Structure probing data (2A3 and DMS) for a 177-nucleotide construct.
[RMDB]
RNA sequence: GGGAACGACUCGAGUAGAGUCGAAAAGAUAUGGAGUCUGAGUGACAUGGAUGUUCGGAAACGAAAUCCAACAGCACUAGACUCCUAAGUCAAAAGGUAGCAUUGAAGUUCGCUUCAAUGCUACCAACGAUCGUCUACGGUUCGCCGUAGACGAUCGAAAAGAAACAACAACAACAAC
Reactivity to 2A3 in 0.01 (KOAc 150mM, MgCl2 10mM, bicine 150mM(pH8.5), 24C), signal-to-noise 1, nucleotides 027 to 126: g040a020u020a010u060g010g030a000g010u040c040u170g210a020g020u020g060a230c030a090u040g030g010a040u090g300u300u020c010g000g000a020a000a020c000g000a020a000a000u020c000c040a010a060c140a060g050c000a000c000u000a000g010a000c000u000c000c000u000a000a000g030u000c030a020a060a000a180g000g000u000a000g000c000a020u000u000g000a010a000g000u100u090c280g100c210u000u000c000a010a000u040g030c000u000a000c000c000a000a000
Reactivity to DMS in 0.01 (KOAc 150mM, MgCl2 10mM, bicine 150mM(pH8.5), 24C), signal-to-noise 1, nucleotides 027 to 126: g000a030u000a230u040g010g010a020g000u000c000u000g000a010g010u000g010a070c070a280u000g000g000a010u000g040u000u000c000g000g020a020a040a150c020g010a020a010a000u010c000c000a030a090c200a090g010c000a030c000u000a000g000a000c010u000c000c000u000a000a030g020u010c020a050a070a120a060g020g000u060a000g000c010a040u000u000g000a010a010g000u010u010c200g010c000u000u000c000a000a000u000g000c000u000a000c000c000a010a000
The DMS profile rests on 922 reads.